[RMDB]
This 177-nucleotide RNA was probed chemically with DMS and 2A3. 2A3 adducts were read by reverse transcription with SuperScript II with manganese. The data come from the RNA Mapping Database (RMDB), libraries RFM100 and RFMREP.

RNA sequence: GGGAACGACUCGAGUAGAGUCGAAAAGGCCCUGAUGAUAAUGGUGUCUCUUCUUUCCUCGUCCGAUUCGACCAUGACGACAAGGGAUUUUAUCUCGUUCUCUUAAUGCGAAUGAUUUUGAAAAGAUGUCCCUAAUUAUAUUCGUAUAAUUAGGGACAAAAGAAACAACAACAACAAC
Reactivity to DMS in 0.01 (KOAc 150mM, MgCl2 10mM, bicine 150mM(pH8.5), 24C), signal-to-noise 6, nucleotides 027 to 126: g010g020c020c010c010u010g010a100u010g010a120u010a110a100u010g000g020u000g020u000c020u000c040u000u010c060u000u000u000c010c030u000c030g020u010c040c020g000a190u010u010c050g010a100c150c060a050u010g010a220c300g010a050c120a070a060g000g000g010a070u000u010u010u010a060u010c030u000c000g010u000u000c020u000c020u000u020a100a080u030g010c090g000a060a050u010g000a110u010u000u000u010g010a050a070a060a130g020a140u010
Reactivity to 2A3 in 0.01 (KOAc 150mM, MgCl2 10mM, bicine 150mM(pH8.5), 24C), signal-to-noise 7, nucleotides 027 to 126: g070g000c000c000c010u030g080a100u030g010a010u070a130a060u160g060g010u060g040u030c010u000c000u100u020c010u030u060u050c000c010u020c020g030u000c020c020g050a070u030u050c040g010a020c060c050a050u070g050a040c030g020a020c050a050a100g030g000g010a020u080u070u040u140a100u040c030u000c010g060u080u010c030u000c000u010u140a120a070u130g040c060g040a070a090u060g110a130u070u110u140u180g110a050a050a030a020g100a030u080